Structure probing data (2A3 and DMS) for a 177-nucleotide construct. The reactions ran in a buffer of 150 mM KOAc, 10 mM MgCl2 and 150 mM bicine (pH 8.5), at 24 C. It was measured as part of the RMDB library TTRDES.
RNA sequence: GGGAACGACUCGAGUAGAGUCGAAAAGAUAUGGACCUGGUGCCAGCAACAGCCUAUCUCGGAAACGAGAUAGGACAUGCUGUGCACCCAGGUCCUAAGUCAAACCAGCAGUGUUCGCACUGCUGGACUCUACUACCAGGUUCGCCUGGUAGUAGAGAAAAGAAACAACAACAACAAC
Reactivity to 2A3 in 0.01 (KOAc 150mM, MgCl2 10mM, bicine 150mM(pH8.5), 24C), signal-to-noise 5, nucleotides 027 to 126: g040a020u090a060u140g000g010a000c000c000u000g030g000u010g010c000c010a010g000c030a030a140c040a210g030c020c000u000a000u000c000u010c010g030g040a090a070a080c010g010a000g000a000u000a000g010g010a010c000a010u040g000c010u040g130u230g000c000a010c020c000c000a000g000g000u020c000c000u000a020a000g020u020c030a050a040a090c010c010a000g000c000a000g000u010g070u130u300c300g060c150a010c000u000g000c010u000g000g000a000
Reactivity to DMS in 0.01 (KOAc 150mM, MgCl2 10mM, bicine 150mM(pH8.5), 24C), signal-to-noise 6, nucleotides 027 to 126: g010a050u000a300u000g000g000a010c010c000u000g020g020u000g000c010c000a010g030c000a030a070c300a250g010c010c000u000a000u000c010u010c000g000g010a140a120a230c000g020a010g000a010u000a010g010g000a010c090a090u000g000c010u000g000u010g020c000a010c140c050c040a000g000g000u010c000c000u000a000a090g010u000c050a120a150a300c020c010a000g000c000a010g020u000g000u000u010c260g010c000a010c000u000g000c000u010g000g010a030
For 2A3 the reverse transcriptase was SuperScript II with manganese. DMS adducts were read by reverse transcription with MarathonRT.